[RMDB]
The data come from the RNA Mapping Database (RMDB), library OK2TRN.
Chemical mapping of a 177-nucleotide RNA with DMS.
For DMS, 2,373 sequencing reads were counted.
RNA sequence: GGGAACGACUCGAGUAGAGUCGAAAACAAGAGAUAGCGAAUAAGCUCUCUUUUGCGCGUGAGUUGCCUAAAAGUGGUACGCGGGUCAUUGUCUUAGUAGGGCCAACUGGCGUGGGAAAGACGACGACGUAAUCCACUGUUUCGACAGUGGAUUACGAAAAGAAACAACAACAACAAC
Reactivity to DMS in 0.01 (KOAc 150mM, MgCl2 10mM, bicine 150mM(pH8.5), 24C), signal-to-noise 3, nucleotides 027 to 126: c060a030a010g000a020g000a040u010a020g000c030g000a180a180u010a190a220g010c020u000c050u000c010u000u000u000u010g000c030g020c020g020u000g000a070g020u020u000g010c000c020u000a050a060a080a140g010u010g000g010u000a040c090g010c030g010g020g020u000c090a080u010u000g010u010c030u000u000a070g010u000a130g000g020g000c130c070a080a060c080u000g020g000c030g020u000g010g000g000a080a040a050g020a050c080g020a070c110g020a140